[RMDB]
RNA sequence: GGGAACGACUCGAGUAGAGUCGAAAAGACGAACGAAAACACAAAUGUUCCACCGUGCAGAAGGGUCCCUCACAUGAGGAUCACCCAUGUAACUCGGACAGGAUAUGCUUUUGGGAAAAAGAGAGAAGGUUCAGGAUGAAUUCGUUCAUCCUGAACCAAAAGAAACAACAACAACAAC
Reactivity to 2A3 in 0.01 (KOAc 150mM, MgCl2 10mM, bicine 150mM(pH8.5), 24C), signal-to-noise 2, nucleotides 027 to 126: g060a000c130g010a120a000c030g080a070a000a080a000c100a010c010a100a140a080u040g010u060u000c000c020a010c030c050g010u000g040c050a000g010a260a040g050g000g010u020c000c030c000u000c000a140c070a270u300g010a000g000g010a020u080c030a030c000c010c010a040u070g010u010a080a050c020u020c060g040g000a120c160a040g000g030a090u050a030u190g000c010u020u000u040u080g040g000g000a000a000a020a090a030g080a000g030a000g000a170a060
Reactivity to DMS in 0.01 (KOAc 150mM, MgCl2 10mM, bicine 150mM(pH8.5), 24C), signal-to-noise 1, nucleotides 027 to 126: g010a080c080g020a160a150c040g010a060a110a070a030c040a020c020a040a120a140u000g000u030u000c040c000a150c030c110g060u020g020c090a100g020a060a100g010g010g010u000c140c010c000u000c020a070c180a100u010g000a000g000g000a050u000c160a010c000c020c020a070u010g000u000a070a050c070u030c140g000g000a060c090a130g000g000a070u000a060u000g000c000u000u000u000u000g000g000g000a060a040a050a100a020g000a110g000a100g010a060a130